[RMDB]
This 177-nucleotide RNA was probed chemically with 2A3 and DMS. Source: RMDB library OK1LIB, as collected in RNAgym. 2A3 adducts were read by reverse transcription with SuperScript II with manganese. The 2A3 profile rests on 4,536 reads. The reactions ran in a buffer of 150 mM KOAc, 10 mM MgCl2 and 150 mM bicine (pH 8.5), at 24 C.
RNA sequence: GGGAACGACUCGAGUAGAGUCGAAAAGCUCUCCAGGAGGACCAAGAGCGAAGACAUGUGUGCGGAAGCACCAACACUUGUCGAUUAGCAGCUUGACGUGCAGGAGCACCAACGUCUUGCUGCGAAAGGGAAGCUUGUCGUUCGCGACGAGCUUCCCAAAAGAAACAACAACAACAAC
Reactivity to 2A3 in 0.01 (KOAc 150mM, MgCl2 10mM, bicine 150mM(pH8.5), 24C), signal-to-noise 4, nucleotides 027 to 126: g010c010u000c000u000c020c030a060g070g020a070g050g040a110c000c050a060a010g010a010g030c030g010a140a020g010a010c010a020u050g010u000g010u010g060c150g020g040a040a040g070c050a070c040c020a060a010c010a000c020u010u040g050u030c010g050a070u050u140a020g000c000a000g000c010u010u000g000a010c000g020u060g040c050a100g020g090a070g110c010a170c070c030a030a000c000g000u010c000u000u010g010c000u000g000c000g020a070a020a000
Reactivity to DMS in 0.01 (KOAc 150mM, MgCl2 10mM, bicine 150mM(pH8.5), 24C), signal-to-noise 2, nucleotides 027 to 126: g000c000u000c000u000c010c030a120g020g000a110g030g020a090c060c180a110a080g000a030g010c070g000a060a090g000a040c030a000u000g010u000g010u010g010c010g010g060a270a120g030c070a120c020c070a090a020c040a100c100u000u000g010u000c010g010a150u020u010a080g000c000a000g010c000u000u000g000a000c010g000u000g030c300a200g010g000a150g020c080a130c050c040a200a000c000g000u010c010u000u000g010c010u000g020c000g010a020a090a140